The record gives the reactivity of an RNA of 177 nucleotides to DMS.
It was measured as part of the RMDB library OK2TRN.
Conditions: 150 mM KOAc, 10 mM MgCl2 and 150 mM bicine (pH 8.5), 24 C.
For DMS the reverse transcriptase was MarathonRT.
For DMS, 1,334 sequencing reads were counted.
[RMDB]
RNA sequence: GGGAACGACUCGAGUAGAGUCGAAAAGAGUUUGGGAGAUAUCGUUAUCGGGUUCAAAAAUUUGCGAGAUAGUUGCAGUCAAUGCGAACAAUCAAGUUCAUUUCUGUGUCGGGGAGAUUCAAAGUAAUACGACACAGUAGUUCGCUACUGUGUCGUAAAAAGAAACAACAACAACAAC
Reactivity to DMS in 0.01 (KOAc 150mM, MgCl2 10mM, bicine 150mM(pH8.5), 24C), signal-to-noise 2, nucleotides 027 to 126: g000a090g050u000u020u010g020g000g020a070g030a060u020a050u000c070g010u020u000a090u010c060g000g000g010u000u010c060a020a080a010a060a100u010u030u000g030c070g000a230g000a020u000a100g010u000u010g030c050a050g030u010c160a070a090u010g010c040g010a030a030c060a050a080u000c120a010a150g000u010u000c060a060u000u000u000c030u010g040u010g000u010c050g000g000g000g000a120g010a110u000u000c110a060a040a120g000u000a040a120